[RMDB]
RNA sequence: GGGAACGACUCGAGUAGAGUCGAAAAGGGCCUCCCGAUCCGAGGGGCCCAACUACCAAGUUUGGAGAGCACUCCGGCCGAAGGGUCGAGGUACCCAGAAUGAGGAAUCCUCACGGAGAAAAGCAGACAGUUUAAAGUUGUUCGCAACUUUAAACUGAAAAGAAACAACAACAACAAC
Reactivity to DMS in 0.01 (KOAc 150mM, MgCl2 10mM, bicine 150mM(pH8.5), 24C), signal-to-noise 2, nucleotides 027 to 126: g000g030g000c010c010u010c020c020c060g010a130u000c070c000g000a210g010g000g020g010c000c000c010a010a020c160u000a240c000c000a060a240g000u010u010u000g000g000a070g030a170g000c020a030c010u020c000c010g000g030c000c000g000a180a110g000g010g050u030c000g020a010g000g000u000a040c040c000c040a210g010a070a040u000g000a300g000g000a100a140u000c010c000u000c250a080c050g000g000a030g010a040a060a060a070g020c120a090g010a180
Reactivity to 2A3 in 0.01 (KOAc 150mM, MgCl2 10mM, bicine 150mM(pH8.5), 24C), signal-to-noise 1, nucleotides 027 to 126: g020g010g000c020c000u040c010c010c020g000a150u000c050c030g000a030g030g020g000g000c000c010c000a010a040c000u070a010c010c010a000a040g000u010u110u110g100g000a140g000a040g110c030a050c050u070c060c000g000g000c020c010g080a070a020g130g000g000u020c020g030a050g000g030u060a050c030c010c010a030g200a120a090u150g000a040g050g010a040a040u100c010c010u010c020a030c060g000g010a010g100a040a150a090a040g160c050a020g080a150